[RMDB]
RNA sequence: GGGAACGACUCGAGUAGAGUCGAAAACAUGAAUAUCCAGAGAUUUCGUCUGCCCCAGUACAGUCCUCUCUUUUUUCGAGGGUUGUCGAUAGGGGAGCCACCUUGGCAAGUAGUAUCCCCUUUGUUAUAUGUACGUUACUUUCGAGUAACGUACAUAAAAAGAAACAACAACAACAAC
Reactivity to 2A3 in 0.01 (KOAc 150mM, MgCl2 10mM, bicine 150mM(pH8.5), 24C), signal-to-noise 3, nucleotides 027 to 126: c020a110u070g050a130a040u150a050u230c060c050a050g050a020g010a160u050u160u160c060g040u040c040u060g050c020c010c000c010a020g050u150a010c010a020g020u000c030c010u040c040u130c050u230u210u170u040u210u210c050g000a000g000g040g000u000u000g000u000c010g040a030u130a090g000g000g000g020a000g000c000c000a020c000c010u080u070g070g000c020a060a030g050u050a000g020u030a300u090c010c000c020c010u040u100u050g160u140u110a200
Reactivity to DMS in 0.01 (KOAc 150mM, MgCl2 10mM, bicine 150mM(pH8.5), 24C), signal-to-noise 4, nucleotides 027 to 126: c100a060u010g010a100a080u010a100u000c060c080a080g010a120g000a110u000u000u010c060g000u000c040u000g020c060c010c010c090a130g010u010a030c030a030g000u000c010c010u000c000u010c050u000u010u020u010u020u010c140g010a040g000g010g020u000u000g010u000c040g000a140u000a060g010g010g010g010a070g000c020c030a030c050c030u000u010g010g020c150a120a170g000u000a040g010u000a100u000c010c000c010c060u000u000u000g000u010u010a130
This 177-nucleotide RNA was probed chemically with 2A3 and DMS.
For DMS the reverse transcriptase was MarathonRT.
Reactivities are rounded to 0.1 and cut off at 0 and 3.
For 2A3 the reverse transcriptase was SuperScript II with manganese.
As a SHAPE reagent, 2A3 marks flexible, mostly unpaired nucleotides at the ribose 2'-OH.